[RMDB]
RNA sequence: GGGAACGACUCGAGUAGAGUCGAAAAGAUAUGGAGACACAGGAGAGGGGCUUGGUGGAGAUCCCUAUAUCGGAAACGAUAUAGAACUCUCCACCAAGCCCUACCCACCUCCGAUGUCUCCUAAGUCGAUAGAUACAUGGUUCGCCAUGUAUCUAUCAAAAGAAACAACAACAACAAC
Reactivity to DMS in 0.01 (KOAc 150mM, MgCl2 10mM, bicine 150mM(pH8.5), 24C), signal-to-noise 1, nucleotides 027 to 126: g000a150u020a300u020g000g030a030g000a000c010a040c300a300g010g020a020g000a140g040g000g000g070c010u000u030g000g030u000g000g000a070g010a030u010c210c300c010u000a000u000a000u020c000g000g000a150a110a170c020g010a020u010a000u000a000g000a090a040c170u000c000u020c000c000a020c000c010a000a000g000c000c000c000u010a010c010c110c110a300c120c010u000c010c000g000a180u010g000u020c010u000c010c000u000a000a060g000u000c080
Overview
The record gives the reactivity of an RNA of 177 nucleotides to DMS. It was measured as part of the RMDB library TTRINS. For DMS the reverse transcriptase was MarathonRT.